[RMDB]
RNA sequence: GGGAACGACUCGAGUAGAGUCGAAAACGCGCAGGCCGUACAGCGCGAGUACUGCGCGUACGGCCGGAUCGCAGCAGGCCAGUGUGGCGCCUCGUGUGCGCACGCGUACGCGCGGCCGGCCGGUACGAUCGUACUGCAGAUUCGUCUGCAGUACGAUAAAAGAAACAACAACAACAAC
Reactivity to DMS in 0.01 (KOAc 150mM, MgCl2 10mM, bicine 150mM(pH8.5), 24C), signal-to-noise 4, nucleotides 027 to 126: c040g020c040g020c050a090g010g010c010c020g000u010a050c120a150g030c140g010c000g000a140g030u000a090c070u000g010c010g030c000g010u000a000c010g010g010c010c000g000g010a040u010c000g010c020a100g030c060a110g000g010c020c050a190g020u000g030u000g000g000c030g020c010c020u010c190g020u010g010u010g000c030g000c030a070c080g020c180g000u020a040c060g010c010g010c030g000g000c010c020g010g000c000c000g010g000u000a080c190g000
Reactivity to 2A3 in 0.01 (KOAc 150mM, MgCl2 10mM, bicine 150mM(pH8.5), 24C), signal-to-noise 2, nucleotides 027 to 126: c010g000c010g000c040a020g020g000c000c010g000u090a120c160a170g040c150g060c020g130a040g050u070a290c040u060g030c000g000c000g000u000a060c030g030g000c020c020g000g000a000u050c000g000c000a060g000c050a050g130g000c050c030a150g040u100g030u090g210g090c020g020c010c040u140c120g170u260g000u020g070c010g000c030a030c070g050c060g060u030a050c030g010c000g000c000g000g000c010c010g000g000c020c040g030g000u070a030c090g020